[RMDB]
RNA sequence: GGGAACGACUCGAGUAGAGUCGAAAACCUACAUUCUGCGCAAACCGUUCUGCAAUGUGUAAUUGGUGCUUGAUUAGCCAAGAUUCCAUAACUCACUACCCAGCUCUUAAGAUGGUUCAAACACAUCGACGCUGUGUCUUCGGACACAGCAAAAGAAACAACAACAACAAC
Reactivity to DMS in 0.01 (KOAc 150mM, MgCl2 10mM, bicine 150mM(pH8.5), 24C), signal-to-noise 4, nucleotides 027 to 129: c010c040u030a080c130a160u040u010c080u080g050c190g040c130a090a090a100c100c020g020u040u020c020u050g000c070a070a030u010g020u000g000u020a070a090u040u010g030g020u120g020c000u020u070g020a160u010u010a180g040c150c060a000a080g010a140u050u020c000c000a080u030a120a150c000u030c040a070c090u080a080c000c070c040a050g050c090u030c050u000u000a040a050g010a050u000g000g040u080u060c150a000a010a000c140a080c040a040u010c030g030a060c180
Reactivity to 2A3 in 0.01 (KOAc 150mM, MgCl2 10mM, bicine 150mM(pH8.5), 24C), signal-to-noise 6, nucleotides 027 to 129: c000c000u000a020c010a110u080u040c030u100g050c050g000c020a020a060a100c020c030g080u070u050c030u050g020c060a040a070u120g040u000g030u140a070a080u030u050g010g000u030g050c030u020u020g050a060u080u100a010g030c010c000a040a010g080a160u070u040c000c000a020u030a060a030c030u020c040a020c040u040a070c010c010c000a020g050c010u030c020u140u030a060a010g000a000u020g050g000u130u130c070a080a070a000c090a000c000a090u030c000g050a030c060